Record summary:
Chemical mapping of a 207-nucleotide RNA with 2A3. Source: RMDB library M2RFPK, as collected in RNAgym. For 2A3, 1,338 sequencing reads were counted. The reactions ran in a buffer of 150 mM KOAc, 10 mM MgCl2 and 150 mM bicine (pH 8.5), at 24 C. 2A3 adducts were read by reverse transcription with SuperScript II with manganese.
RNA sequence: GGGAACGACUCGAGUAGAGUCGAAAAAGAUCGAUUACGAUCGAUCAAUGAUGCCCCUCACCCACCUCUGAAGAUCCCAGGUGGGCGAGGGAACGGAGCACGGGAUCACGAGCAGUACGGUGCUCGAAAAAGAACUAGACCUUCGGGUCUAGUUCAACACUUACCCACUCUUCGGAGUGGGUAAGUGAAAAGAAACAACAACAACAAC
Reactivity to 2A3 in 0.01 (KOAc 150mM, MgCl2 10mM, bicine 150mM(pH8.5), 24C), signal-to-noise 2, nucleotides 027 to 156: a000g000a000u010c010g010a010u060u120a100c230g060a000u000c010g000a000u000c010a010a060u190g090a050u120g070c010c000c010c010u020c000a040c000c000c000a000c010c010u090c030u100g070a090a050g010a070u030c020c000c000a000g000g000u010g000g000g000c000g000a000g010g000g010a010a030c090g120g060a050g070c090a090c160g000g000g000a010u010c010a000c070g020a020g000c020a000g050u300a090c120g120g060u020g010c000u010c030g050a000a020a010a000a000g000a000a000c000u000a000g000a000c000c020u020u100c190g080g000g000u000c000u000a000g000u000u000c000a000a000